[RMDB]
RNA sequence: GGGAACGACUCGAGUAGAGUCGAAAAUCAGGCAACUUCGGUUGCCUGAAAAUAAACUCGCCUAUAGCCAGGCGAGUACCAAAGCGGCUAUAGCAAUGGAAAAAACUGCCUCGUUCGCGAGGCAGAAUCGUUACGUAAUGUUCGCAUUACGUAACGAAAAAGAAACAACAACAACAAC
Reactivity to DMS in 0.01 (KOAc 150mM, MgCl2 10mM, bicine 150mM(pH8.5), 24C), signal-to-noise 4, nucleotides 027 to 126: u000c000a000g010g000c000a000a000c000u000u000c250g030g000u000u000g010c000c000u010g000a010a000a050a080u000a110a120a200c000u000c000g000c010c010u010a070u000a070g000c090c110a100g010g010c010g000a010g000u000a050c030c010a040a030a240g010c180g000g020c090u000a040u010a150g020c080a040a110u010g010g030a020a100a050a030a070a120c000u000g000c000c000u000c010g000u000u010c210g010c010g010a000g000g010c000a000g000a020a060
Reactivity to 2A3 in 0.01 (KOAc 150mM, MgCl2 10mM, bicine 150mM(pH8.5), 24C), signal-to-noise 3, nucleotides 027 to 126: u000c010a010g000g000c010a000a010c010u050u080c210g110g000u010u000g010c000c000u000g000a000a000a000a000u070a000a050a010c000u010c000g020c010c020u140a090u120a100g080c050c030a000g010g000c000g000a000g010u000a010c010c000a030a000a020g080c050g060g010c070u100a010u090a180g050c050a070a100u130g120g000a120a060a010a010a010a040c000u000g000c000c000u020c000g020u050u050c250g010c010g090a000g000g010c000a000g000a000a010